[RMDB]
RNA sequence: GGGAACGACUCGAGUAGAGUCGAAAAGCAGAGAGCAAAUAACACUGAAUAUGGCUUGGCCUCAGGGGUCUUCACAAGAGACAUCAACAAAGCCAUGUAUGUGAGUGACAAGCUAGAGGCGGGAACGAAGGAAAGGUCGAUUCGUCGACCUUUCCUUAAAAGAAACAACAACAACAAC
Reactivity to DMS in 0.01 (KOAc 150mM, MgCl2 10mM, bicine 150mM(pH8.5), 24C), signal-to-noise 1, nucleotides 027 to 126: g000c120a060g000a070g000a070g060c040a040a110a080u020a120a130c030a050c020u000g000a050a050u020a060u000g000g000c000u010u010g000g020c090c060u010c120a070g030g020g020g000u020c020u000u000c020a090c300a100a300g000a000g000a020c010a150u000c080a050a230c060a030a030a040g000c020c020a030u000g000u020a050u010g030u000g010a110g010u040g020a100c160a080a070g010c040u010a040g010a050g010g000c050g000g010g000a060a070c130g010
Notes:
An RNA of 177 nucleotides, treated with DMS and read out base by base. The reactions ran in a buffer of 150 mM KOAc, 10 mM MgCl2 and 150 mM bicine (pH 8.5), at 24 C. Source: RMDB library OK2TRN, as collected in RNAgym.